[RMDB]
RNA sequence: GGGAACGACUCGAGUAGAGUCGAAAAUUUGCAAAGAGACCUCCGAAGCUCCCCAAUUUCGUAUCUCAGCAUGUUCGUCUCUCGCGCUUUCAAAAGAUAACCUACGCCAAAACAGGCCACAGUGGCUACCAAGGUAGGAGUUGGGAUGCCCACCCAAGUAUUAGUAUGGGUUCGCCCAUACUAAUACAAAAGAAACAACAACAACAAC
Reactivity to DMS in 0.01 (KOAc 150mM, MgCl2 10mM, bicine 150mM(pH8.5), 24C), signal-to-noise 1, nucleotides 027 to 156: u020u000u010g010c030a110a090a210g000a210g010a030c060c010u000c020c000g000a140a130g050c020u000c050c020c000c020a050a140u000u000u000c030g030u010a070u000c030u010c060a210g090c030a080u000g040u000u000c060g030u000c010u000c030u000c010g020c070g020c030u030u030u010c000a060a030a120a120g020a170u000a050a010c080c000u000a020c070g000c060c050a090a030a070a090c060a160g000g010c030c010a090c130a120g020u000g000g040c020u000a070c040c000a060a180g000g060u000a090g000g000a110g060u010u000g020g000g000a150u000g050c020c000c020a300c000c020c000a000a300
Reactivity to 2A3 in 0.01 (KOAc 150mM, MgCl2 10mM, bicine 150mM(pH8.5), 24C), signal-to-noise 2, nucleotides 027 to 156: u060u030u090g010c020a020a180a060g080a040g020a040c070c060u090c070c110g100a130a010g000c040u060c040c030c050c060a050a050u080u060u040c060g020u030a040u020c020u010c050a010g000c000a060u030g030u060u060c030g060u010c000u000c000u000c060g070c030g010c100u070u060u090c080a150a110a040a030g070a090u110a090a000c020c000u010a020c080g170c040c020a000a120a040a060c040a070g020g010c000c000a040c000a100g160u080g040g000c000u020a060c040c020a070a000g000g000u030a030g010g010a020g040u060u020g000g030g000a080u080g020c010c030c000a030c000c020c000a070a040

About this RNA:
Chemical mapping of a 207-nucleotide RNA with DMS and 2A3. For DMS the reverse transcriptase was MarathonRT. Conditions: 150 mM KOAc, 10 mM MgCl2 and 150 mM bicine (pH 8.5), 24 C. The DMS profile rests on 1,462 reads.